[RMDB]
RNA sequence: GGGAACGACUCGAGUAGAGUCGAAAAUUUGUCGCAUUCUUAUUACGGUACGUGCAAACAUUAGUUUCCAAGCGGAAGAAACUGUGUGUUCAUUUUAUGGAUUUUCGUGUUGUACGAUUUUUGUCAGAUAAUGGCAUACCUUCGGGUAUGCCAUUAUAAAAGAAACAACAACAACAAC
Reactivity to 2A3 in 0.01 (KOAc 150mM, MgCl2 10mM, bicine 150mM(pH8.5), 24C), signal-to-noise 1, nucleotides 027 to 126: u000u000u020g010u070c200g020c120a140u020u000c020u000u120a170u020u200a020c000g000g120u120a000c070g090u020g100c010a000a190a000c000a030u090u000a020g000u000u000u120c000c000a040a130g200c120g020g020a140a000g070a000a000a000c070u070g000u140g000u000g000u120u000c090a060u050u070u030u220a110u260g090g000a100u040u130u000u000c080g020u030g030u160u000g060u100a080c000g100a220u000u180u000u000u000g020u000c040a000g000
Reactivity to DMS in 0.01 (KOAc 150mM, MgCl2 10mM, bicine 150mM(pH8.5), 24C), signal-to-noise 2, nucleotides 027 to 126: u000u010u010g010u000c030g010c030a050u000u020c060u010u020a100u020u000a050c090g020g030u010a040c080g050u020g010c070a080a070a020c020a060u020u010a030g000u000u000u020c010c060a110a110g010c100g050g000a110a080g000a020a020a010c020u000g010u010g020u000g000u010u000c050a100u000u010u010u010a050u010g010g000a060u010u000u000u030c090g000u000g030u000u010g000u000a050c100g000a100u020u000u000u010u000g020u000c220a100g000